RNA sequence: GGGAACGACUCGAGUAGAGUCGAAAAGCAUGUGGUUUAAUUCGAAGAUACGCGAAGAACCUUACCUAGGCUUGAUAUCCAACAAAUCCAUUAGAGAUAGUGGAGUGCUAGCUUGCUAGAAUGUUGAGUAAUAUGGUACGUUCGCGUACCAUAUUACAAAAGAAACAACAACAACAAC
Reactivity to 2A3 in 0.01 (KOAc 150mM, MgCl2 10mM, bicine 150mM(pH8.5), 24C), signal-to-noise 4, nucleotides 027 to 126: g020c040a050u090g030u070g070g050u000u040u090a160a080u110u020c010g020a080a030g100a290u150a140c120g000c000g050a000a020g030a020a000c010c000u030u060a060c010c030u070a050g060g040c000u000u030g030a040u080a080u130c040c010a020a040c050a030a160a050u010c000c000a000u020u020a030g010a010g050a080u020a040g020u020g010g010a020g000u060g030c000u010a020g000c010u020u100g000c000u020a010g030a160a080u160g030u050u050g050a060
Reactivity to DMS in 0.01 (KOAc 150mM, MgCl2 10mM, bicine 150mM(pH8.5), 24C), signal-to-noise 6, nucleotides 027 to 126: g020c050a060u000g010u000g000g000u000u000u000a080a170u000u000c020g010a090a100g020a170u010a080c290g010c030g000a020a060g000a020a040c040c040u000u010a050c090c080u010a090g020g000c020u000u000g010a110u010a090u010c080c010a050a040c100a030a110a130u000c010c010a020u010u000a010g000a160g010a160u000a020g020u000g000g010a030g010u010g010c020u000a010g000c040u010u000g020c000u000a030g000a060a090u000g010u000u000g010a250
Structure probing data (2A3 and DMS) for a 177-nucleotide construct. For 2A3 the reverse transcriptase was SuperScript II with manganese. Values cover nucleotides 27 to 126. The reactions ran in a buffer of 150 mM KOAc, 10 mM MgCl2 and 150 mM bicine (pH 8.5), at 24 C. The DMS profile rests on 6,601 reads. Source: RMDB library RFMREP, as collected in RNAgym.